[RMDB]
RNA sequence: GGGAACGACUCGAGUAGAGUCGAAAAGCCGGAGGCGCGCGGUGACCGGAGGCGGUGGCCUGUCGUGCUGGCAGAAAUUGCGGAGCAUGGUGGCCGGUCCGCAAUGAUAAUCUCAUCACAACAGCAGCAGUGUGAUACCAUUCGUGGUAUCACACUGAAAAGAAACAACAACAACAAC
Reactivity to 2A3 in 0.01 (KOAc 150mM, MgCl2 10mM, bicine 150mM(pH8.5), 24C), signal-to-noise 5, nucleotides 027 to 126: g020c010c010g000g050a050g030g030c020g000c000g000c010g040g000u020g070a040c020c010g040g040a080g030g080c040g010g010u050g030g000c000c020u060g090u120c030g010u010g020c010u030g010g000c050a010g110a020a170a010u100u060g000c010g030g040a010g010c050a080u080g060g010u040g040g040c020c010g010g040u010c000c000g000c000a010a030u030g020a010u080a090a090u020c010u010c050a080u100c020a030c020a110a090c040a060g080c020a000g020
Reactivity to DMS in 0.01 (KOAc 150mM, MgCl2 10mM, bicine 150mM(pH8.5), 24C), signal-to-noise 4, nucleotides 027 to 126: g000c020c030g000g000a170g000g010c040g000c070g000c050g020g020u020g000a080c040c040g000g000a120g000g000c030g010g000u010g000g010c020c000u020g020u010c020g020u010g020c010u010g000g000c030a030g000a080a100a060u010u010g000c010g020g040a030g000c050a070u020g010g020u010g000g000c010c040g020g020u030c000c000g010c050a150a040u000g000a060u040a080a080u010c050u000c030a120u020c110a060c070a080a060c100a050g010c130a110g000
Chemical mapping of a 177-nucleotide RNA with 2A3 and DMS. For 2A3 the reverse transcriptase was SuperScript II with manganese. It was measured as part of the RMDB libraries RFM100 and RFMREP. DMS adducts were read by reverse transcription with MarathonRT. Conditions: 150 mM KOAc, 10 mM MgCl2 and 150 mM bicine (pH 8.5), 24 C.